[RMDB]
RNA sequence: GGGAACGACUCGAGUAGAGUCGAAAAGGACCGGCUGAGGGGUCCGACAUAGCCUCAGCGUCUAGCCUGUCACUCACCAGGCGAAUCAUGUGAGUGUUGAUGCUUUUGCAUCUUAAUCUGACUGAGUCGUAGCAGUCUCAUGAACUAUGACCUUAGACAUUAAUUACUAUUUCGAUAGUAAUUAAUGAAAAGAAACAACAACAACAAC
Reactivity to 2A3 in 0.01 (KOAc 150mM, MgCl2 10mM, bicine 150mM(pH8.5), 24C), signal-to-noise 7, nucleotides 027 to 156: g010g000a010c000c000g030g000c000u000g000a000g000g010g010g000u000c000c010g010a000c030a090u170a040g070c000c000u010c010a000g000c000g020u060c080u070a040g000c000c000u010g020u040c000a000c010u000c000a000c000c000a000g000g000c040g030a030a050u120c050a040u080g000u000g010a000g000u000g020u030u100g000a000u000g000c030u080u220u260u300g000c010a000u000c000u010u130a130a100u070c120u120g000a010c000u000g000a010g010u000c000g000u000a000g000c000a000g020u010c100u070c160a140u180g080a060a040c000u000a010u020g000a000c000c000u050u050a100g020a150
Reactivity to DMS in 0.01 (KOAc 150mM, MgCl2 10mM, bicine 150mM(pH8.5), 24C), signal-to-noise 3, nucleotides 027 to 156: g020g020a040c020c030g030g020c020u000g010a070g030g040g050g010u000c040c040g020a090c100a080u000a160g020c010c010u000c010a040g030c020g020u020c090u010a160g010c010c000u010g000u010c050a020c010u010c010a040c020c030a040g020g010c010g030a070a070u000c160a080u010g010u000g010a050g020u010g020u000u010g000a070u010g010c000u010u000u000u000g010c020a140u000c010u010u000a080a140u000c050u000g000a110c040u000g000a110g000u000c020g040u000a040g010c010a100g010u000c140u000c170a110u010g010a100a060c020u000a010u010g000a050c010c020u000u000a080g010a280